Chemical mapping of a 177-nucleotide RNA with 2A3 and DMS. Source: RMDB library RFMREP, as collected in RNAgym.
RNA sequence: GGGAACGACUCGAGUAGAGUCGAAAAAUGGCGGAUAGGAACCAGGUCAUGUUUGUACGUGAUUUGGGCCGACAUCCCCGCCGAAAUAGUCCUGCGAAGAUCUAAGGUCGCUUCUGGAUGGAUUUGCCAUCCGUUUGUUGUUCGCAACAAACGGAUGAAAAGAAACAACAACAACAAC
Reactivity to 2A3 in 0.01 (KOAc 150mM, MgCl2 10mM, bicine 150mM(pH8.5), 24C), signal-to-noise 2, nucleotides 027 to 126: a020u030g010g000c020g010g000a060u080a180g080g040a040a210c010c000a000g020g000u000c020a000u010g140u040u160u260g230u290a020c030g000u000g000a020u000u010u000g010g020g000c010c030g010a020c000a080u050c040c020c000c000g000c000c000g000a000a010a090u100a030g050u040c020c020u040g050c020g040a030a000g010a080u000c070u120a050a080g110g000u040c030g010c050u100u010c060u070g050g000a020u070g040g010a100u050u060u170g100c010
Reactivity to DMS in 0.01 (KOAc 150mM, MgCl2 10mM, bicine 150mM(pH8.5), 24C), signal-to-noise 3, nucleotides 027 to 126: a120u000g020g000c020g000g010a160u010a170g020g020a080a090c010c000a010g000g010u000c000a010u010g010u000u000u020g010u000a040c010g040u000g010a000u000u000u000g000g030g000c040c010g010a160c220a100u010c110c100c020c000g000c010c010g030a020a070a070u000a130g010u000c010c000u000g030c080g010a040a060g030a070u000c100u020a130a140g000g010u000c040g020c090u000u000c070u000g010g010a060u000g010g010a180u020u000u010g000c150